Overview
An RNA of 207 nucleotides, treated with 2A3 and DMS and read out base by base. The reactions ran in a buffer of 150 mM KOAc, 10 mM MgCl2 and 150 mM bicine (pH 8.5), at 24 C. Source: RMDB library OK3TST, as collected in RNAgym.
RNA sequence: GGGAACGACUCGAGUAGAGUCGAAAAGGCAGGCUGCCUGUAGCUGUAGCCUCUGAUUUACUGCAAAGUUAGUCCUAAGACCCUGUUAUAACACCUUUACAAAAUGGAGUGGUUUGACGUAUCACAAGCGCUCAUACGUGAUUUAAGGACAAGCAGGUCUUCUUACCACGUUCGCGUGGUAAGAAGAAAAAGAAACAACAACAACAAC
Reactivity to 2A3 in 0.01 (KOAc 150mM, MgCl2 10mM, bicine 150mM(pH8.5), 24C), signal-to-noise 3, nucleotides 027 to 156: g010g030c050a000g010g000c000u030g010c020c080u090g090u070a010g000c030u030g060u060a000g010c030c000u000c040u030g110a070u120u000u080a080c030u020g010c010a040a060a020g060u040u060a040g010u000c010c000u050a030a040g010a130c000c000c000u060g040u140u100a160u060a130a060c010a060c020c010u080u210u190a080c100a050a200a030a080u110g040g060a100g000u030g030g080u070u010u040g040a070c070g050u190a120u250c030a020c010a090a060g000c020g010c020u020c030a070u110a210c030g030u020g070a100u060u000u220a000a000g000g000a010c010a020a020g010c000a050g000g000
Reactivity to DMS in 0.01 (KOAc 150mM, MgCl2 10mM, bicine 150mM(pH8.5), 24C), signal-to-noise 1, nucleotides 027 to 156: g000g080c000a160g000g020c050u020g000c000c060u000g000u030a110g040c110u000g020u030a040g020c010c000u010c040u000g020a170u000u020u000a000c020u010g010c060a150a090a050g000u000u000a080g000u000c020c010u010a050a120g000a130c010c040c000u010g010u040u000a090u000a110a100c040a040c020c010u000u000u000a300c050a100a080a040a220u000g030g000a120g010u030g000g000u010u000u000g020a050c060g000u020a070u000c070a020c100a180a110g030c000g050c040u000c110a070u010a160c050g060u000g020a140u000u000u020a030a090g020g000a080c020a070a280g000c010a110g000g040